[RMDB]
RNA sequence: GGGAACGACUCGAGUAGAGUCGAAAAGAUAUGGAACUUGAAUUCCGACGAAGUCUUUCGGAAACGAAAGAGCAGAGGAACAAGUUCCUAAGUCAAACUCUGGGGAUAGUUCGCUAUCCCCAGAGAAGAUCAUGUAUCACUUCGGUGAUACAUGAUCAAAAGAAACAACAACAACAAC
Reactivity to 2A3 in 0.01 (KOAc 150mM, MgCl2 10mM, bicine 150mM(pH8.5), 24C), signal-to-noise 2, nucleotides 027 to 126: g000a000u000a000u040g000g010a010a000c000u060u020g060a180a300u300u020c020c030g050a180c010g010a140a000g010u000c000u000u000u000c000g000g000a000a010a000c000g020a010a010a010g020a100g300c020a000g020a000g010g000a010a010c000a000a000g000u000u000c000c000u000a000a000g000u000c000a040a040a130c000u000c000u000g000g030g000g000a000u000a000g020u060u090c230g000c140u000a000u010c000c010c000c000a000g000a000g010a000a000
Reactivity to DMS in 0.01 (KOAc 150mM, MgCl2 10mM, bicine 150mM(pH8.5), 24C), signal-to-noise 2, nucleotides 027 to 126: g010a020u000a020u000g000g000a010a000c000u000u010g000a150a290u000u010c010c010g010a190c190g010a090a100g000u000c000u000u000u000c000g010g000a000a010a020c010g010a010a010a010g000a030g010c030a010g000a010g020g040a010a070c010a010a000g000u000u000c000c000u000a000a060g000u000c000a140a120a200c000u000c000u000g000g000g020g000a020u000a010g010u000u010c210g010c010u000a000u000c000c010c000c000a010g000a000g020a020a050

Source: RMDB library TTRDEL, as collected in RNAgym. An RNA of 177 nucleotides, treated with 2A3 and DMS and read out base by base. The reactions ran in a buffer of 150 mM KOAc, 10 mM MgCl2 and 150 mM bicine (pH 8.5), at 24 C. DMS adducts were read by reverse transcription with MarathonRT. The DMS profile rests on 2,101 reads.